[RMDB]
RNA sequence: GGGAACGACUCGAGUAGAGUCGAAAAGAUGAUAGUAACAUAAUUAGUCAAUUGUGGACGACAGCAUUGACUAAUGCUAGUAUUUCCUAUGAUACUGAAGUGUAGGAACUUCGUCGUCACUAUCAUACAUAGGUGACUGAUUCGUUGGUUAUCUAUGAAAAGAAACAACAACAACAAC
Reactivity to 2A3 in 0.01 (KOAc 150mM, MgCl2 10mM, bicine 150mM(pH8.5), 24C), signal-to-noise 9, nucleotides 027 to 126: g130a010u020g000a000u000a000g010u010a030a000c000a000u030a030a010u040u040a050g200u140c130a020a020u010u030g000u000g000g010a010c010g000a000c010a000g000c000a000u010u050g130a150c100u230a040a000u010g000c000u000a000g000u010a020u010u020u070c020c020u060a060u230g020a010u020a020c010u020g010a010a010g010u020g020u130a130g090g080a040a010c000u010u000c010g000u000c000g000u000c000a000c000u000a000u000c000a010u010a070
Reactivity to DMS in 0.01 (KOAc 150mM, MgCl2 10mM, bicine 150mM(pH8.5), 24C), signal-to-noise 9, nucleotides 027 to 126: g010a040u000g000a010u000a010g020u000a090a160c020a020u000a020a010u000u010a110g010u040c150a050a020u000u000g010u000g000g000a030c020g000a010c010a030g010c000a010u000u000g010a120c160u030a030a010u000g000c010u000a020g000u000a010u000u000u010c090c090u020a050u030g010a030u000a010c020u000g010a010a010g010u000g010u020a160g010g010a120a030c010u000u000c010g010u000c010g010u000c010a040c000u000a000u000c010a020u000a160
Chemical mapping of a 177-nucleotide RNA with 2A3 and DMS. The data come from the RNA Mapping Database (RMDB), library OK1LIB. The reactions ran in a buffer of 150 mM KOAc, 10 mM MgCl2 and 150 mM bicine (pH 8.5), at 24 C. For DMS, 212,618 sequencing reads were counted. DMS (dimethyl sulfate) methylates the pairing face of unpaired adenines and cytosines.